[RMDB]
RNA sequence: GGGAACGACUCGAGUAGAGUCGAAAACGUCGUGAACUAGCGACAAUGCGGUAGAUCCAUCGUUAUCUAACCGAAACAUCGUGACUAGUCGUAGAAUAGAACCAGGAGAGGUCGCUGGCAAACAAAGACGGGGUAUCUGAUUCGUCGGAUACCCCGUAAAAGAAACAACAACAACAAC
Reactivity to DMS in 0.01 (KOAc 150mM, MgCl2 10mM, bicine 150mM(pH8.5), 24C), signal-to-noise 6, nucleotides 027 to 126: c070g040u020c080g010u010g010a220a130c050u000a030g000c040g000a010c010a090a090u010g020c040g000g000u000a000g010a010u010c090c070a120u040c250g000u030u020a020u010c010u000a040a060c020c010g010a080a110a170c130a090u010c050g000u000g000a110c030u010a030g000u010c020g000u010a060g010a070a070u010a040g010a050a080c060c030a060g000g000a050g010a060g000g020u000c020g000c000u000g000g020c070a040a130a050c090a080a100a090g000
Reactivity to 2A3 in 0.01 (KOAc 150mM, MgCl2 10mM, bicine 150mM(pH8.5), 24C), signal-to-noise 5, nucleotides 027 to 126: c040g020u030c000g010u040g080a060a060c020u000a020g020c000g010a010c040a040a050u170g040c010g010g010u020a000g010a020u030c060c050a260u100c180g140u170u050a030u010c000u000a020a180c010c000g010a040a030a010c040a020u050c040g050u060g040a080c020u010a010g040u040c030g030u050a030g010a040a030u060a070g030a040a030c020c010a020g030g030a070g010a020g000g050u020c010g000c010u010g010g010c040a050a050a000c030a020a090a010g110
Record summary:
This 177-nucleotide RNA was probed chemically with DMS and 2A3. For 2A3 the reverse transcriptase was SuperScript II with manganese. The reactions ran in a buffer of 150 mM KOAc, 10 mM MgCl2 and 150 mM bicine (pH 8.5), at 24 C. The DMS profile rests on 15,729 reads. Source: RMDB library OK1LIB, as collected in RNAgym. Reactivities are given for positions 27 through 126.